[RMDB]
RNA sequence: GGGAACGACUCGAGUAGAGUCGAAAAGUAAUAGAUAAGGGGAUGACGAGAAAGGGUGCGCUGAUAUCCCCUACGAAUGCUAGCAGUAAAUAGAAUAGCGCUCCUAAUACAACUAGCAACAAAAGGAUAAGGUAUCGUGAUGUCAAUCACAUUGCGAAAUAUGACCCUGAUUCGUCAGGGUCAUAUUAAAAGAAACAACAACAACAAC
Reactivity to DMS in 0.01 (KOAc 150mM, MgCl2 10mM, bicine 150mM(pH8.5), 24C), signal-to-noise 2, nucleotides 027 to 156: g020u000a170a120u000a060g020a160u000a090a070g010g030g000g020a030u000g000a300c160g050a200g020a100a130a130g010g020g000u000g050c040g050c020u000g000a110u000a120u000c000c000c000c040u000a100c040g000a070a110u000g030c000u000a010g030c020a130g010u010a090a080a080u000a070g000a100a150u000a140g030c020g010c020u000c030c000u000a080a110u000a050c010a100a040c030u000a010g000c020a070a160c060a060a070a080a070g010g000a040u010a050a130g020g030u000a080u000c030g000u010g030a030u000g020u010c030a120a150u010c160a080c000a000u000u000g060c000g030a110
Reactivity to 2A3 in 0.01 (KOAc 150mM, MgCl2 10mM, bicine 150mM(pH8.5), 24C), signal-to-noise 3, nucleotides 027 to 156: g020u060a000a130u060a130g080a080u100a140a030g000g010g000g010a010u040g060a050c130g050a060g110a080a050a050g010g020g010u040g030c020g000c010u010g000a010u020a010u110c000c000c000c000u000a000c030g010a070a000u030g020c000u030a000g020c090a000g030u110a030a150a130u160a100g090a130a070u030a040g000c020g000c030u000c000c010u000a040a020u100a070c020a080a020c020u020a010g050c050a030a040c030a070a100a020a010g080g000a080u110a150a000g050g010u090a020u080c010g000u020g000a000u010g020u060c110a070a060u090c000a020c010a020u000u020g000c020g000a030
The record gives the reactivity of an RNA of 207 nucleotides to DMS and 2A3.
Source: RMDB library OK3TST, as collected in RNAgym.
The DMS profile rests on 2,967 reads.
2A3 adducts were read by reverse transcription with SuperScript II with manganese.
The 2A3 profile rests on 1,656 reads.
Conditions: 150 mM KOAc, 10 mM MgCl2 and 150 mM bicine (pH 8.5), 24 C.